An RNA of 177 nucleotides, treated with 2A3 and DMS and read out base by base.
The data come from the RNA Mapping Database (RMDB), library OK2TST.
The DMS profile rests on 6,818 reads.
[RMDB]
RNA sequence: GGGAACGACUCGAGUAGAGUCGAAAACGCGCAUCAUUAAAGUUGAGCCCUAGAAGCUUCAAUCUUCGCAACACAAUCUCUUUUCUCCACCACUUCAAGAUCUUUUCGCCUACCACUUCCGAAAGGACCAUACCUAAAAUUUCGAUUUUAGGUAUGGAAAAGAAACAACAACAACAAC
Reactivity to 2A3 in 0.01 (KOAc 150mM, MgCl2 10mM, bicine 150mM(pH8.5), 24C), signal-to-noise 7, nucleotides 027 to 126: c040g050c010g000c010a040u050c020a030u100u230a200a060a010g030u040u040g030a020g010c020c000c000u080a130g040a130a010g030c010u140u090c080a050a110u030c030u080u050c060g000c040a050a060c030a020c010a110a160u010c030u000c000u090u040u090u030c020u010c020c010a030c010c020a040c020u060u060c050a060a040g020a140u030c020u020u030u040u050c030g030c000c000u020a060c010c030a060c060u070u010c010c010g050a080a020a000g020g010a010
Reactivity to DMS in 0.01 (KOAc 150mM, MgCl2 10mM, bicine 150mM(pH8.5), 24C), signal-to-noise 6, nucleotides 027 to 126: c120g020c080g010c050a060u000c050a070u010u000a090a090a100g010u000u000g000a110g010c010c020c040u010a070g010a110a110g000c070u010u000c100a070a060u000c020u000u000c080g010c060a050a050c080a050c100a060a080u000c070u000c030u000u000u000u000c030u000c020c030a100c070c040a060c030u010u000c060a040a120g010a050u010c010u000u000u000u010c050g010c020c020u010a100c060c060a060c140u000u000c010c010g010a090a060a120g000g000a160